Conditions: 150 mM KOAc, 10 mM MgCl2 and 150 mM bicine (pH 8.5), 24 C.
An RNA of 177 nucleotides, treated with 2A3 and DMS and read out base by base.

RNA sequence: GGGAACGACUCGAGUAGAGUCGAAAAUAUGGGCAGUUCGCUGCCCAUACGAGCGGAGUCCGGCACUAUGAGCCCGCAGCGUUGGUGCGUAGCCGCGGUGGAGAGACCAAGCCUUCGGGCUUGGUAAUCUCAAUUUGGAAUUCGUUCCAAAUUGAGAAAAAGAAACAACAACAACAAC
Reactivity to 2A3 in 0.01 (KOAc 150mM, MgCl2 10mM, bicine 150mM(pH8.5), 24C), signal-to-noise 3, nucleotides 027 to 126: u080a020u010g020g000g000c010a000g000u030u080c150g080c130u010g000c000c000c000a000u000a010c000g030a000g020c010g010g000a030g070u020c030c030g050g000c020a020c050u090a110u170g120a040g050c000c030c080g090c080a000g030c010g070u100u130g030g000u080g000c050g030u060a010g020c020c000g010c030g000g040u080g020g100a160g000a020g020a010c010c010a000a000g000c000c000u040u060c210g040g000g000c000u000u000g000g000u010a000a030
Reactivity to DMS in 0.01 (KOAc 150mM, MgCl2 10mM, bicine 150mM(pH8.5), 24C), signal-to-noise 6, nucleotides 027 to 126: u000a000u000g000g010g020c000a010g010u000u020c200g030c010u000g010c000c000c000a000u000a010c050g000a110g000c030g010g000a120g010u000c020c020g010g020c030a040c050u000a060u010g000a160g010c030c030c090g010c120a100g010c050g010u000u000g010g000u000g010c030g010u000a170g010c020c020g010c040g000g010u010g000g000a130g010a140g000a040c000c000a000a010g000c000c000u000u010c220g030g010g020c000u000u000g000g010u000a000a030
DMS adducts were read by reverse transcription with MarathonRT.